[RMDB]
RNA sequence: GGGAACGACUCGAGUAGAGUCGAAAAAUGAUGGUGCCUGCACCGAACCUGGCCUCCUCCUUGAGGGAGAGCCGGAGGACCUUCCGGUAGAGGAGGUUCCUCAGGUCACGGGCGGUGCGGGUGGCGGGGUUGACAGAGAUUUCGAUCUCUGUCAACCAAAAGAAACAACAACAACAAC
Reactivity to 2A3 in 0.01 (KOAc 150mM, MgCl2 10mM, bicine 150mM(pH8.5), 24C), signal-to-noise 1, nucleotides 027 to 126: a000u200g110a020u140g040g270u050g000c000c000u000g000c020a000c010c020g030a110a130c000c010u000g010g030c030c010u020c000c000u020c030c050u100u180g120a260g000g040g030a020g010a010g040c020c010g060g000a000g010g000a010c020c000u050u030c030c010g110g190u180a020g020a120g060g000a010g030g000u080u110c030c010u000c000a000g020g030u020c010a000c090g000g000g000c020g000g000u040g000c050g030g010g010u040g050g030c020g000g050
Reactivity to DMS in 0.01 (KOAc 150mM, MgCl2 10mM, bicine 150mM(pH8.5), 24C), signal-to-noise 1, nucleotides 027 to 126: a100u010g000a160u010g000g000u010g000c010c030u010g000c020a030c010c010g000a040a080c020c040u000g020g020c080c010u000c030c010u000c020c060u000u040g020a200g000g000g000a020g000a260g000c090c080g040g000a020g030g000a060c100c030u020u000c000c000g010g020u040a130g010a170g010g000a020g020g000u010u000c070c020u000c030a040g030g010u010c060a080c110g000g000g030c060g010g020u000g010c020g010g030g030u000g000g010c060g020g000
An RNA of 177 nucleotides, treated with 2A3 and DMS and read out base by base.
DMS adducts were read by reverse transcription with MarathonRT.
Values cover nucleotides 27 to 126.
2A3 is a SHAPE reagent: it acylates the 2'-hydroxyl of flexible nucleotides of all four kinds.